[RMDB]
RNA sequence: GGGAACGACUCGAGUAGAGUCGAAAAGAAAUUACCAGAUCCUGGAACCCUAUCGAUAUUGUCUCUGCUGUGUAAAUAGCUGUGAGUAGUGCAAUAUUGCUUAUAGGGUUUUAGUGUUUGGGAAAAACUACUCCUAUUUGUUCGCAAAUAGGAGUAGAAAAGAAACAACAACAACAAC
Reactivity to DMS in 0.01 (KOAc 150mM, MgCl2 10mM, bicine 150mM(pH8.5), 24C), signal-to-noise 5, nucleotides 027 to 126: g010a080a060a060u020u010a140c000c000a010g000a010u000c210c000u000g000g000a000a000c000c000c000u000a010u000c020g000a010u000a000u000u000g000u010c030u010c020u000g000c000u000g020u010g010u020a050a100a100u030a080g030c030u010g010u030g010a070g020u010a050g010u000g020c020a010a010u000a010u000u000g010c300u030u010a020u000a000g000g010g010u000u000u000u010a010g000u000g000u000u000u000g000g000g010a060a070a070a080a100
Reactivity to 2A3 in 0.01 (KOAc 150mM, MgCl2 10mM, bicine 150mM(pH8.5), 24C), signal-to-noise 9, nucleotides 027 to 126: g040a000a070a020u130u110a030c000c000a000g000a020u020c000c000u010g010g010a000a000c000c010c000u010a010u050c010g000a000u000a000u010u020g120u050c020u000c010u110g010c010u010g040u020g050u190a060a170a150u160a140g060c050u070g080u100g150a030g020u110a010g020u030g020c000a000a000u000a000u000u020g010c050u150u080a020u010a030g010g000g010u000u000u000u000a000g000u000g010u010u000u000g000g000g030a010a070a000a000a000
This 177-nucleotide RNA was probed chemically with DMS and 2A3. Reactivities are given for positions 27 through 126. The RNA was probed in 150 mM KOAc, 10 mM MgCl2 and 150 mM bicine (pH 8.5) at 24 C.